RNA sequence: GGGAACGACUCGAGUAGAGUCGAAAAAUCGAGGCCACGUUGGCCAAGCUGAGCGAUCAGUACGCCCGCGGUAGGGCAUGACGCCAUGGGGGCGUGUCGGUGUACCGACACGCUCGCUCACGGGUUCGUAUUACCCAGACUUCGGUCUGGGUAAUACAAAAGAAACAACAACAACAAC
Reactivity to 2A3 in 0.01 (KOAc 150mM, MgCl2 10mM, bicine 150mM(pH8.5), 24C), signal-to-noise 4, nucleotides 027 to 126: a000u180c110g010a100g060g040c010c000a060c080g050u050u110g010g020c010c000a040a040g000c010u020g020a010g030c030g180a230u020c000a000g040u050a060c070g010c000c000c000g020c040g090g160u220a220g040g030g000c040a050u050g050a030c070g000c050c000a020u080g050g030g010g000g000c010g000u000g000u000c010g000g000u250g140u270a300c010c010g000a000c010a000c010g000c000u010c000g000c020u040c010a000c070g020g000g000u070u080c020
Reactivity to DMS in 0.01 (KOAc 150mM, MgCl2 10mM, bicine 150mM(pH8.5), 24C), signal-to-noise 2, nucleotides 027 to 126: a090u000c070g000a100g040g000c010c040a090c100g020u000u020g050g000c000c040a050a080g000c030u030g000a040g030c270g000a180u000c030a010g000u000a060c150g010c000c000c020g000c210g000g000u010a010g020g000g010c020a040u010g040a040c050g020c000c010a070u050g070g000g000g000g030c000g060u000g070u000c000g000g030u020g000u030a190c100c000g000a040c030a000c020g000c000u010c070g000c010u030c040a130c080g010g030g000u000u000c130
This 177-nucleotide RNA was probed chemically with 2A3 and DMS. The RNA was probed in 150 mM KOAc, 10 mM MgCl2 and 150 mM bicine (pH 8.5) at 24 C. The DMS profile rests on 2,967 reads.